An RNA of 177 nucleotides, treated with DMS and 2A3 and read out base by base.
RNA sequence: GGGAACGACUCGAGUAGAGUCGAAAAUUGAACGGAUUCGUCCGUUCAACGCGUGCGAUCCAAACGUAGUACAAAAGUACAGACGAAAGGACAAGGAUCAAAUGAUACAGCCGUUCGCGGCUGUAAACAAUCUGUAAGGCUUCGGCCUUACAGAUUGAAAAGAAACAACAACAACAAC
Reactivity to DMS in 0.01 (KOAc 150mM, MgCl2 10mM, bicine 150mM(pH8.5), 24C), signal-to-noise 3, nucleotides 027 to 126: u000u000g000a020a000c000g020g010a070u000u020c180g010u000c000c010g030u000u000c000a000a010c120g020c130g020u000g030c140g010a050u010c010c010a060a090a150c030g010u000a060g030u000a020c010a100a080a080a150g020u010a020c010a110g000a110c080g000a080a110a120g000g020a070c140a090a140g020g010a020u000c010a110a180a050u010g010a130u000a010c010a010g000c000c000g000u000u000c270g030c000g000g000c000u010g010u000a010a060a150
Reactivity to 2A3 in 0.01 (KOAc 150mM, MgCl2 10mM, bicine 150mM(pH8.5), 24C), signal-to-noise 2, nucleotides 027 to 126: u020u000g000a000a010c000g000g030a010u060u050c150g080u000c060c000g020u000u010c000a000a000c010g030c030g050u160g040c080g050a030u020c000c000a020a060a020c030g000u020a040g000u020a040c020a030a300a070a090g020u020a020c020a050g190a080c050g090a150a050a080g110g010a070c070a060a120g030g010a010u020c030a000a000a070u120g030a020u000a040c000a000g000c000c000g040u040u110c260g020c020g060g020c010u020g000u010a020a000a000
2A3 adducts were read by reverse transcription with SuperScript II with manganese. The RNA was probed in 150 mM KOAc, 10 mM MgCl2 and 150 mM bicine (pH 8.5) at 24 C. Reactivities are rounded to 0.1 and cut off at 0 and 3.